Structure probing data (DMS and 2A3) for a 177-nucleotide construct.
The data come from the RNA Mapping Database (RMDB), library OK2TST.
Values cover nucleotides 27 to 126.
The DMS profile rests on 2,195 reads.
The RNA was probed in 150 mM KOAc, 10 mM MgCl2 and 150 mM bicine (pH 8.5) at 24 C.

RNA sequence: GGGAACGACUCGAGUAGAGUCGAAAAAAGCAUCUAAGCGGGAAACUUGCCUCGAGAUGAGUCUUCCCUGGGGCUUUAAGCCCCCUGAAGGAACGUUAAAGACUAUGACGUUGAUAGGCUGGGUGUGAUGUACCUAAUGCUUCGGCAUUAGGUACAUAAAAGAAACAACAACAACAAC
Reactivity to DMS in 0.01 (KOAc 150mM, MgCl2 10mM, bicine 150mM(pH8.5), 24C), signal-to-noise 2, nucleotides 027 to 126: a060a090g020c040a010u000c060u000a090a130g010c050g000g010g010a100a040a070c030u000u000g020c110c020u010c130g000a130g000a070u000g000a040g010u000c060u000u010c000c000c020u010g000g010g000g020c020u010u010u020a110a110g010c040c000c000c000c050u000g010a100a090g010g010a030a030c010g010u000u010a020a050a110g010a080c190u000a080u000g000a020c010g020u000u000g000a110u010a040g000g000c030u000g010g000g010u000g010u000g010
Reactivity to 2A3 in 0.01 (KOAc 150mM, MgCl2 10mM, bicine 150mM(pH8.5), 24C), signal-to-noise 1, nucleotides 027 to 126: a010a010g020c010a020u000c030u100a140a090g000c060g060g010g000a040a120a070c020u050u100g010c020c000u090c050g150a150g050a200u090g000a000g000u020c050u020u030c000c020c010u000g000g050g000g000c030u160u150u090a090a030g000c030c010c010c010c000u030g060a080a060g040g040a050a020c010g000u020u030a170a130a080g110a050c050u050a110u140g010a000c020g030u000u050g020a140u080a080g080g000c080u040g000g100g020u090g090u070g050